[RMDB]
Chemical mapping of a 177-nucleotide RNA with DMS and 2A3. For DMS the reverse transcriptase was MarathonRT. The reactions ran in a buffer of 150 mM KOAc, 10 mM MgCl2 and 150 mM bicine (pH 8.5), at 24 C. It was measured as part of the RMDB library OK2TST. Reactivities are given for positions 27 through 126. For 2A3 the reverse transcriptase was SuperScript II with manganese.

RNA sequence: GGGAACGACUCGAGUAGAGUCGAAAAAGGGGAAGCCAAACCAAAACGAUACCUUAGGAAAACUGGCCAUUUGUUCGUCUACUCUAUGCAGCAAUGCACGUGACAAACGGCACACCAGCACGUGGAGGUAGAGCAACCUUUUCGAAGGUUGCUCUACAAAAGAAACAACAACAACAAC
Reactivity to DMS in 0.01 (KOAc 150mM, MgCl2 10mM, bicine 150mM(pH8.5), 24C), signal-to-noise 2, nucleotides 027 to 126: a070g000g010g000g000a070a110g000c020c010a090a100a110c040c060a000a050a100a050c090g000a120u000a050c000c010u000u000a100g020g000a090a030a090a080c160u000g020g010c040c020a090u000u000u000g000u030u000c060g010u000c010u000a010c010u000c010u020a060u000g010c030a010g010c240a050a160u000g000c020a060c060g010u000g000a060c040a050a040a000c080g000g000c030a100c090a070c030c020a010g000c060a060c140g000u000g000g030a060g000
Reactivity to 2A3 in 0.01 (KOAc 150mM, MgCl2 10mM, bicine 150mM(pH8.5), 24C), signal-to-noise 1, nucleotides 027 to 126: a000g060g000g000g080a050a000g080c050c050a100a010a080c010c000a030a050a010a000c050g050a040u100a080c010c050u040u100a040g000g080a020a070a130a090c090u100g110g000c000c020a050u060u090u070g050u040u070c020g020u000c020u030a040c000u000c020u040a110u150g020c000a010g000c040a010a080u080g030c030a020c030g020u050g010a010c040a030a080a010c000g050g070c050a020c010a010c060c000a000g000c040a020c070g010u040g040g040a060g080